[RMDB]
RNA sequence: GGGAACGACUCGAGUAGAGUCGAAAAGAAAAGGAGGAGGAGAAAUAUAGCGCGCGCUCGGUCCUCCCACGCGCGGCGCGCGCAGAUAAGCGCGCGCGGAGGAUGAUUAAUAGAUAGCGCGCAAAAACUUCAGGAUUAAGUUCGCUUAAUCCUGAAGAAAAGAAACAACAACAACAAC
Reactivity to DMS in 0.01 (KOAc 150mM, MgCl2 10mM, bicine 150mM(pH8.5), 24C), signal-to-noise 1, nucleotides 027 to 126: g000a110a080a100a160g010g010a070g000g000a050g000g000a070g030a090a090a090u010a050u000a110g050c040g010c020g040c020g000c020u000c030g010g020u000c000c000u010c000c000c110a000c070g000c000g010c060g000g000c030g020c020g070c030g090c040a010g000a110u030a160a110g030c020g050c010g050c000g000c060g000g030a040g020g000a020u000g000a110u000u020a050a110u000a090g010a050u000a060g010c000g000c000g040c010a020a040a080a070a030